[RMDB]
RNA sequence: GGGAACGACUCGAGUAGAGUCGAAAAAGGAAUGUGCAUAUCUGCAGAGGACUGGCAGGGCUGGCUGAUGCAGACAGAAGAGAGGUCAGCUCAGGAAGGAGGGCUAGGGAGCCUCAGAUUAUUCUCCUCACCUGGAGGUGGGGAACUUGAAGCCCCACGUAGUCUGGAAGUUCGCUUCCAGACUACGAAAAGAAACAACAACAACAAC
Reactivity to 2A3 in 0.01 (KOAc 150mM, MgCl2 10mM, bicine 150mM(pH8.5), 24C), signal-to-noise 2, nucleotides 027 to 156: a000g040g000a160a040u070g020u090g070c020a090u070a030u090c050u070g030c030a020g010a010g090g030a030c130u090g110g020c060a070g010g050g000c020u010g000g050c020u030g010a010u090g060c030a030g080a050c020a060g120a090a020g010a040g060a020g000g000u070c020a000g000c000u020c030a010g040g010a020a020g030g000a030g000g000g000c020u040a090g030g020g000a050g050c020c010u000c000a000g010a070u050u050a020u300u100c080u030c030c000u000c000a030c020c010u050g120g000a100g200g000u010g000g010g030g000a000a050c010u020u060g010a050a000g030c010c000c010c000a000
Structure probing data (2A3) for a 207-nucleotide construct. The data come from the RNA Mapping Database (RMDB), library OK3TST.